[RMDB]
RNA sequence: GGGAACGACUCGAGUAGAGUCGAAAAGAAGCACGGCUUGUGUGUGAUCCUUUUGGAUUGCACUGUAUAUCCUACGCUGUGCGAACGUAGGUCCAUUGUGGCGAGAGCCACUUACAGUACAGCUUAUUAUGACGCAUCGCUGUACGAACGAUGCGGAAUCCCAGUAUACUUUCGAGUAUACUGGGAUAAAAGAAACAACAACAACAAC
Reactivity to DMS in 0.01 (KOAc 150mM, MgCl2 10mM, bicine 150mM(pH8.5), 24C), signal-to-noise 5, nucleotides 027 to 156: g010a110a150g020c040a050c030g020g030c080u000u010g020u000g000u000g030u000g000a050u000c030c000u000u000u000u010g060g010a090u000u000g020c010a010c000u010g030u000a070u000a120u000c050c020u010a040c060g010c010u000g020u000g020c100g010a060a030c060g020u000a030g020g000u000c120c070a130u000u000g020u010g010g020c010g010a300g000a300g020c010c010a030c010u000u000a020c040a090g030u000a050c030a080g010c060u000u010a110u010u000a140u000g010a100c010g020c010a020u000c010g010c010u000g030u000a160c120g010a030a040c010g010a030u000g020c000g000g000a120
Reactivity to 2A3 in 0.01 (KOAc 150mM, MgCl2 10mM, bicine 150mM(pH8.5), 24C), signal-to-noise 7, nucleotides 027 to 156: g080a060a010g010c020a020c060g030g040c060u170u140g050u010g000u000g000u000g160a010u030c000c000u130u190u140u300g000g000a000u020u020g000c010a010c010u010g070u030a180u020a020u130c010c020u030a030c060g000c030u020g010u030g030c020g010a080a010c030g020u080a030g030g040u020c040c020a090u010u120g000u010g000g000c010g010a050g020a000g030c000c000a020c010u010u060a050c010a020g050u030a010c020a020g020c030u070u070a060u140u090a130u300g100a020c010g010c020a010u020c020g020c060u090g060u210a040c020g000a030a020c020g000a000u010g000c010g020g030a020